[RMDB]
Source: RMDB library RFM100, as collected in RNAgym. Structure probing data (2A3) for a 177-nucleotide construct.
RNA sequence: GGGAACGACUCGAGUAGAGUCGAAAAGGGGACGCGCGCCCCAGGAGCGAAAGCAAACUGCUAGCUGCAGAGGCGCUACCGCAGUUCAGGCUUCCCAACAGGUUAGCUAGCCUAGGAUCCACCCGGUCGGGUCAUGGCUAUUCGUAGCCAUGACCCGAAAAGAAACAACAACAACAAC
Reactivity to 2A3 in 0.01 (KOAc 150mM, MgCl2 10mM, bicine 150mM(pH8.5), 24C), signal-to-noise 1, nucleotides 027 to 126: g000g060g030g010a070c070g080c010g030c020g080c200c000c000c000a040g020g100a030g000c030g090a070a030a000g030c080a160a080a000c030u020g070c000u000a000g000c020u120g000c100a000g040a040g300g060c000g020c030u100a100c020c020g000c030a020g000u040u010c050a050g080g050c000u040u030c000c000c000a010a060c130a030g000g120u130u150a030g070c090u050a000g000c000c000u080a090g000g000a040u010c000c010a000c000c040c000g050g000u000
For 2A3 the reverse transcriptase was SuperScript II with manganese.